[RMDB]
RNA sequence: GGGAACGACUCGAGUAGAGUCGAAAAGAUAUGGAAUGGCGCCGUGCUACGCGUUUGACGUCGGAAACGACCGAGCGUAGAACUACACGGGCCAUUCCUAAGUCAAAGAUAACGUUCGCGUUAUCAAGUUUAUAGUUAGCUUCGGCUAACUAUAAACAAAAGAAACAACAACAACAAC
Reactivity to 2A3 in 0.01 (KOAc 150mM, MgCl2 10mM, bicine 150mM(pH8.5), 24C), signal-to-noise 6, nucleotides 027 to 126: g000a010u030a020u110g000g030a010a010u020g010g040c300g150c300c010g000u010g000c010u020a010c010g030c020g080u120u240u300g130a120c140g010u010c000g000g040a050a030a030c010g000a020c040c080g050a030g010c000g010u000a010g010a010a020c130u220a040c040a000c000g000g020g000c000c000a000u000u000c000c000u000a000a000g000u000c010a050a030a120g000a000u000a000a000c010g010u040u100c300g000c010g150u010u010a010u010c020a000a040
Reactivity to DMS in 0.01 (KOAc 150mM, MgCl2 10mM, bicine 150mM(pH8.5), 24C), signal-to-noise 7, nucleotides 027 to 126: g000a040u010a300u010g000g000a030a010u000g000g000c010g010c000c010g030u000g000c000u000a000c010g010c000g010u010u010u010g010a140c300g000u000c000g000g000a080a080a150c000g010a010c010c050g010a080g010c000g000u000a010g000a060a030c070u020a290c010a010c000g000g000g000c000c000a000u000u000c000c000u000a010a050g000u000c030a100a150a110g000a010u000a000a010c000g010u010u010c260g020c010g010u000u000a000u000c010a090a120